[RMDB]
Structure probing data (DMS and 2A3) for a 177-nucleotide construct. For DMS, 1,507 sequencing reads were counted.
RNA sequence: GGGAACGACUCGAGUAGAGUCGAAAAACUAUUUGUUCUAUAGCAAAGAAACCCGAAACACAGAAUAUAUUUGUUAUAUAUGCUUUGUGGAACACAGCUGUUAGGACAUGAGCCAUCAGGGUCCAAAAAUGCUAUCGAGUUUCGACUCGAUAGCAUUAAAAGAAACAACAACAACAAC
Reactivity to DMS in 0.01 (KOAc 150mM, MgCl2 10mM, bicine 150mM(pH8.5), 24C), signal-to-noise 1, nucleotides 027 to 126: a190c110u000a060u000u000u000g030u000u000c020u000a010u020a030g020c050a070a120a100g000a050a110a130c010c000c010g020a150a040a090c000a000c030a010g000a150a010u010a000u000a010u000u030u100g010u000u030a030u010a010u000a050u000g000c060u000u000u000g030u000g000g000a080a090c110a140c120a040g000c100u000g010u060u010a010g010g000a110c050a070u020g000a030g010c050c000a020u000c040a040g000g010g010u000c020c040a000a070a110
Reactivity to 2A3 in 0.01 (KOAc 150mM, MgCl2 10mM, bicine 150mM(pH8.5), 24C), signal-to-noise 2, nucleotides 027 to 126: a000c050u030a040u110u050u020g010u000u000c010u020a040u080a040g000c020a170a000a120g050a170a110a070c000c010c040g090a060a200a020c060a000c000a000g160a120a020u010a070u000a050u060u300u180g070u300u030a090u020a060u000a000u030g000c010u070u080u010g030u040g050g000a010a010c040a000c020a010g000c000u070g000u050u030a000g020g020a000c010a060u120g020a050g010c000c010a020u070c040a030g010g090g070u090c000c070a020a000a000